An RNA of 177 nucleotides, treated with 2A3 and DMS and read out base by base. The 2A3 profile rests on 1,268 reads. DMS adducts were read by reverse transcription with MarathonRT. It was measured as part of the RMDB library OK1LIB. The reactions ran in a buffer of 150 mM KOAc, 10 mM MgCl2 and 150 mM bicine (pH 8.5), at 24 C.
[RMDB]
RNA sequence: GGGAACGACUCGAGUAGAGUCGAAAAGAAAGCUUCGACGAGAAGAAUUUCGAAUGACCGAGACUCGGAAAAAGAAAAACGAGGAUCGAAAGGUCAAAUUAGCGACUUAGCUGGUCGUAGCGAGAAAGGCAAAUGAAUAGUUCGCUAUUCAUUUGCCAAAAGAAACAACAACAACAAC
Reactivity to 2A3 in 0.01 (KOAc 150mM, MgCl2 10mM, bicine 150mM(pH8.5), 24C), signal-to-noise 2, nucleotides 027 to 126: g150a010a070a020g020c000u080u070c010g010a040c190g130a020g040a120a000g070a030a120u030u040u040c000g000a060a080u020g000a000c000c000g020a020g000a020c000u020c010g070g110a000a090a130a000a000g280a070a190a000a010a000c020g000a000g020g050a050u000c000g190a190a090a030g060g030u010c000a010a010a010u160u030a080g030c010g030a040c060u000u060a080g000c000u000g080g000u010c010g000u030a060g010c000g040a110g060a170a010a000
Reactivity to DMS in 0.01 (KOAc 150mM, MgCl2 10mM, bicine 150mM(pH8.5), 24C), signal-to-noise 2, nucleotides 027 to 126: g020a100a140a140g000c000u000u000c000g010a010c040g040a140g000a040a030g000a060a080u000u050u000c020g000a100a150u030g000a010c000c000g010a060g000a270c000u000c000g030g000a050a030a090a160a220g020a110a030a080a050a080c010g030a020g000g000a020u020c010g000a040a090a160g000g030u000c000a010a040a080u030u080a100g000c010g010a000c100u000u000a120g000c030u010g000g000u000c000g000u000a000g000c010g000a070g000a040a070a070